Chemical mapping of a 207-nucleotide RNA with DMS and 2A3. It was measured as part of the RMDB library M2RFPK. The RNA was probed in 150 mM KOAc, 10 mM MgCl2 and 150 mM bicine (pH 8.5) at 24 C.
[RMDB]
RNA sequence: GGGAACGACUCGAGUAGAGUCGAAAAAGACCACCUCUACGGAGGUAGUCAAGUCACGUAGCUAGUACCAGGUUGCAAUACUAGAGCGUUAGUCCUGGGGCGUACGGUGGCAGUACGCUGCCACCGAUAAAACUUGAAUACUUCGGUAUUCAAGUAAGCUAUGAGUAUGCUUCGGCAUACUCAUAGCAAAAGAAACAACAACAACAAC
Reactivity to DMS in 0.01 (KOAc 150mM, MgCl2 10mM, bicine 150mM(pH8.5), 24C), signal-to-noise 2, nucleotides 027 to 156: a210g000a020c010c010a060c010c000u000c010u000a140c290g040g010a040g020g000u000a000g020u000c000a130a090g010u020c050a200c050g000u000a100g000c010u000a030g020u000a010c020c000a070g000g000u000u000g020c010a110a040u000a030c020u000a010g000a300g000c000g000u010u000a060g010u000c000c020u000g010g020g020g010c150g020u000a040c030g010g020u000g040g030c010a050g030u000a120c210g030c000u000g000c000c010a000c000c000g000a020u010a050a080a080a060c010u000u000g000a030a030u000a010c020u000u000c300g060g000u000a000u000u010c000a000a010g000u000a010a090
Reactivity to 2A3 in 0.01 (KOAc 150mM, MgCl2 10mM, bicine 150mM(pH8.5), 24C), signal-to-noise 3, nucleotides 027 to 156: a000g000a000c000c010a010c020c020u010c010u020a080c270g110g000a010g000g000u020a010g000u010c020a050a010g100u060c050a010c080g020u030a050g050c000u000a010g000u050a220c020c000a010g010g000u000u000g010c000a010a020u000a000c000u000a000g010a010g020c110g090u130u200a010g040u120c010c000u000g010g010g010g050c110g080u170a050c020g010g000u000g010g000c000a000g000u020a020c290g020c060u000g000c000c000a010c010c000g000a010u010a000a070a010a010c000u000u000g000a010a000u000a000c000u020u060c190g050g000u000a000u010u000c010a000a000g010u000a010a040